The record gives the reactivity of an RNA of 177 nucleotides to DMS and 2A3. The RNA was probed in 150 mM KOAc, 10 mM MgCl2 and 150 mM bicine (pH 8.5) at 24 C. It was measured as part of the RMDB library 15KREP.
RNA sequence: GGGAACGACUCGAGUAGAGUCGAAAACCUACGGAAAUCCCUGAGUUCCUCGGAUGUCCAGGCCGUCCCCUCUUCUAGAGAAGGGAGACUCCGGAACUUCUUCCAUGAUUGGGACGAAGCCGCCACCCUUAUGAUUGAAGUUCGCUUCAAUCAUAAGAAAAGAAACAACAACAACAAC
Reactivity to DMS in 0.01 (KOAc 150mM, MgCl2 10mM, bicine 150mM(pH8.5), 24C), signal-to-noise 5, nucleotides 027 to 126: c010c010u000a130c160g010g010a070a100a110u000c020c020c040u000g010a190g010u000u000c050c020u000c150g020g010a040u000g010u010c020c060a130g000g030c040c030g000u000c010c000c010c050u000c020u000u010c100u000a100g010a100g010a080a040g010g010g010a080g000a090c090u010c070c040g010g010a120a090c050u000u000c020u000u000c030c030a060u000g010a120u000u000g010g000g010a040c060g000a080a070g010c030c030g000c060c060a080c090c060
Reactivity to 2A3 in 0.01 (KOAc 150mM, MgCl2 10mM, bicine 150mM(pH8.5), 24C), signal-to-noise 4, nucleotides 027 to 126: c010c000u010a030c060g010g040a050a050a050u040c000c000c020u060g030a060g100u080u050c010c000u010c030g020g010a040u060g040u010c030c020a040g040g000c020c020g020u000c000c000c000c010u010c010u090u030c030u090a100g020a020g000a140a050g020g030g000a030g020a010c030u050c070c050g020g030a040a040c000u030u010c010u040u000c030c010a040u120g030a120u150u190g020g000g000a010c030g030a070a010g020c010c010g020c030c020a050c010c030